The record gives the reactivity of an RNA of 177 nucleotides to DMS and 2A3. 2A3 adducts were read by reverse transcription with SuperScript II with manganese. Reactivities are given for positions 27 through 126. Reactivities are rounded to 0.1 and cut off at 0 and 3. It was measured as part of the RMDB library M2PK90. The reactions ran in a buffer of 150 mM KOAc, 10 mM MgCl2 and 150 mM bicine (pH 8.5), at 24 C. For 2A3, 2,985 sequencing reads were counted.

RNA sequence: GGGAACGACUCGAGUAGAGUCGAAAAAUACAGUACGAAAGUACAAAGAAGCAAUCAAACCGAGCAGUGAAAUGAUGGCUUCAGUCCAAAAUGGGCAAACACUGCAGACGGAGCGAAAGGCAAAUAAUAUUGUUACUGAGUUCGCUCAGUAACAAUAAAAAGAAACAACAACAACAAC
Reactivity to DMS in 0.01 (KOAc 150mM, MgCl2 10mM, bicine 150mM(pH8.5), 24C), signal-to-noise 4, nucleotides 027 to 126: a060u000a080c120a140g030u000a000c020g010a120a120a160g020u000a000c010a070a130a120g020a070a060g020c030a080a160u010c030a020a300a170c050c030g000a100g010c020a010g020u000g010a120a090a090u000g000a090u000g010g010c030u000u000c070a090g010u000c030c060a000a040a070a110u010g000g020g020c060a070a070a150c020a010c010u010g010c010a080g010a160c040g020g000a050g000c290g000a020a050a120g000g000c050a040a060a040u020a070a100
Reactivity to 2A3 in 0.01 (KOAc 150mM, MgCl2 10mM, bicine 150mM(pH8.5), 24C), signal-to-noise 2, nucleotides 027 to 126: a000u180a020c030a010g000u000a000c000g040a110a080a010g020u010a000c000a010a080a000g080a060a030g020c020a010a040u030c020a000a080a000c010c020g010a000g010c010a010g020u010g070a090a060a170u100g060a050u110g080g020c040u190u130c070a010g050u060c010c000a020a050a030a300u150g010g020g000c000a020a060a000c020a000c010u000g010c010a000g040a030c020g020g020a010g010c000g020a050a000a010g200g000c020a030a060a050u150a090a020